Source: RMDB libraries RFM100 and RFMREP, as collected in RNAgym. Structure probing data (DMS and 2A3) for a 177-nucleotide construct. For 2A3 the reverse transcriptase was SuperScript II with manganese.
[RMDB]
RNA sequence: GGGAACGACUCGAGUAGAGUCGAAAACAACUAAGUUAUCUUUGGUAACUUCUGAUUAUAGAUGAAUGGCAUAGAGGUGUUAGAAAACAUGAGACAAAAGUAAUCUUCUUGAUGCUAGCGUCUCAGGAAUUAUGAACCAAUUCGUUGGUUCAUAAUUAAAAGAAACAACAACAACAAC
Reactivity to DMS in 0.01 (KOAc 150mM, MgCl2 10mM, bicine 150mM(pH8.5), 24C), signal-to-noise 9, nucleotides 027 to 126: c080a100a160c100u010a030a030g010u000u000a020u000c010u020u020u030g020g020u000a020a030c020u000u000c120u010g000a090u020u020a100u020a060g010a080u010g000a070a060u010g010g010c040a050u010a060g000a070g010g010u000g010u010u010a070g000a090a050a060a090c100a070u010g000a010g010a010c010a040a300a100a010g000u000a040a050u000c000u010u030c230u020u020g010a020u000g000c000u000a020g000c300g000u000c000u000c010a030g000g010
Reactivity to 2A3 in 0.01 (KOAc 150mM, MgCl2 10mM, bicine 150mM(pH8.5), 24C), signal-to-noise 9, nucleotides 027 to 126: c030a010a010c040u090a040a010g020u010u020a030u040c050u060u200u280g030g010u030a020a030c000u040u010c040u090g160a210u110u140a110u170a170g110a060u070g080a120a060u090g040g010c050a040u050a070g060a040g060g040u070g040u100u060a040g070a060a080a010a020c070a090u060g000a000g010a000c010a010a020a020a010g020u100a170a210u010c010u200u020c040u100u280g010a000u010g000c000u000a000g010c000g010u000c000u000c010a000g000g030